[RMDB]
Chemical mapping of a 207-nucleotide RNA with 2A3.

RNA sequence: GGGAACGACUCGAGUAGAGUCGAAAAGCGUACUACUUUCGGGAAAGGUUGCAUCGAUCUAUACUAGUACUCCCAAAUAGGAGGACCGUAUAGGGAGCAACUAACACGAAAGUAUCGCAAACUGUUGUUCCUCCAGUUCGCUGGAGGAACAACAGAACUAGUCGUUCCUCUUCGGAGGAACGACUAGAAAAGAAACAACAACAACAAC
Reactivity to 2A3 in 0.01 (KOAc 150mM, MgCl2 10mM, bicine 150mM(pH8.5), 24C), signal-to-noise 1, nucleotides 027 to 156: g030c010g060u120a020c040u000a000c000u030u000u000c000g030g020g070a130a200a150g000g020u020u010g010c030a100u270c090g040a010u030c030u000a010u000a000c040u030a010g000u000a000c010u000c030c020c000a250a270a170u300a160g000g000a000g020g000a000c000c000g020u010a000u000a020g000g010g020a030g030c000a010a000c030u030a070a020c040a000c060g000a010a000a000g000u000a010u190c000g000c000a000a030a110c000u000g000u000u000g000u000u020c020c000u000c000c020a030g040u160u150c240g050c170u000g010g000a000g030g010a000a000c000a000a000c000a000g000a000a000
2A3 adducts were read by reverse transcription with SuperScript II with manganese.